[RMDB]
RNA sequence: GGGAACGACUCGAGUAGAGUCGAAAAGACAAGGAACAAUCAGGAGAUGGCUCUAGGCACUCAGGGUCGCAUCAUCAUGAAGCUUCCUCUUGGGCCGACAGCUCUAGACACUCACUGGUGGGCCAGGGAUCUUUCACCCAUUCGUGGGUGAAAGAUCAAAAGAAACAACAACAACAAC
Reactivity to 2A3 in 0.01 (KOAc 150mM, MgCl2 10mM, bicine 150mM(pH8.5), 24C), signal-to-noise 2, nucleotides 027 to 126: g020a030c070a080a170g060g010a100a080c050a070a190u080c010a050g000g030a030g040a060u070g010g010c000u000c000u060a050g030g000c030a030c120u040c060a030g050g000g000u030c040g000c020a040u000c000a040u040c030a060u230g040a060a000g010c020u050u050c000c000u080c060u050u090g010g000g000c020c020g020a050c010a000g000c000u040c010u060a030g010a040c040a000c090u040c020a170c140u030g030g030u000g020g010g060c040c000a070g070g080
Reactivity to DMS in 0.01 (KOAc 150mM, MgCl2 10mM, bicine 150mM(pH8.5), 24C), signal-to-noise 2, nucleotides 027 to 126: g010a160c160a120a110g030g000a010a010c070a100a090u000c030a040g010g000a060g000a150u000g000g000c010u010c030u000a240g000g000c030a070c040u000c100a080g010g000g030u000c060g000c020a050u000c010a120u010c220a110u010g020a090a100g000c040u000u010c000c000u000c000u010u000g010g010g020c030c030g010a070c300a020g000c010u050c110u010a100g000a180c270a060c040u000c050a050c010u000g000g010u000g010g000g040c030c010a070g000g010
This 177-nucleotide RNA was probed chemically with 2A3 and DMS. The DMS profile rests on 1,206 reads. Values cover nucleotides 27 to 126. For 2A3, 1,577 sequencing reads were counted. Source: RMDB library OK2TRN, as collected in RNAgym.